Record summary: Chemical mapping of a 207-nucleotide RNA with 2A3 and DMS. The reactions ran in a buffer of 150 mM KOAc, 10 mM MgCl2 and 150 mM bicine (pH 8.5), at 24 C. Source: RMDB library OK3TST, as collected in RNAgym. DMS adducts were read by reverse transcription with MarathonRT. For DMS, 5,040 sequencing reads were counted. For 2A3 the reverse transcriptase was SuperScript II with manganese. Reactivities are given for positions 27 through 156.

RNA sequence: GGGAACGACUCGAGUAGAGUCGAAAAUAUUGAGAGUUUUUAGCAGGAAGUGCUGUUGAAUUUUGUCAAAGGCCUUUUCUGCAUCUAUUGAGAUAAUGAUGUGGUUUUGCCAUUGGUUCUGUUUAUAUGCUAGAUUACGUUUAUUGAUUUGUGUAUACAUUUACGUAAUAUUCGUAUUACGUAAAUGAAAAGAAACAACAACAACAAC
Reactivity to 2A3 in 0.01 (KOAc 150mM, MgCl2 10mM, bicine 150mM(pH8.5), 24C), signal-to-noise 7, nucleotides 027 to 156: u170a060u080u170g020a070g000a030g080u100u130u080u260u300a060g010c010a020g000g060a070a030g020u080g110c030u020g030u070u030g030a080a090u130u210u300u300g080u090c030a050a050a060g020g000c010c010u040u080u130u140c000u010g000c010a000u000c010u030a080u030u150g060a110g020a060u110a140a050u150g030a020u040g010u060g020g040u020u050u090u100g040c020c030a020u010u040g030g000u040u070c020u030g070u040u090u020a080u020a010u100g010c020u030a040g010a140u080u110a070c040g030u070u140u090a110u050u080g060a090u050u030u060g030u020g010u020a030u020a130
Reactivity to DMS in 0.01 (KOAc 150mM, MgCl2 10mM, bicine 150mM(pH8.5), 24C), signal-to-noise 2, nucleotides 027 to 156: u000a110u000u010g010a210g010a170g000u000u000u000u010u030a130g030c000a030g010g010a040a100g000u000g020c020u010g010u000u000g000a070a160u000u010u010u000g000u000c030a050a060a110g000g020c020c020u020u000u010u000c010u030g020c010a080u020c020u000a110u000u000g010a190g010a110u000a120a080u010g010a070u000g040u010g010g020u000u000u000u000g020c000c050a250u000u000g020g010u000u010c040u000g010u000u000u010a070u010a030u000g020c010u000a080g010a100u000u010a050c110g000u000u000u010a050u030u000g010a140u000u000u010g030u000g010u000a090u000a150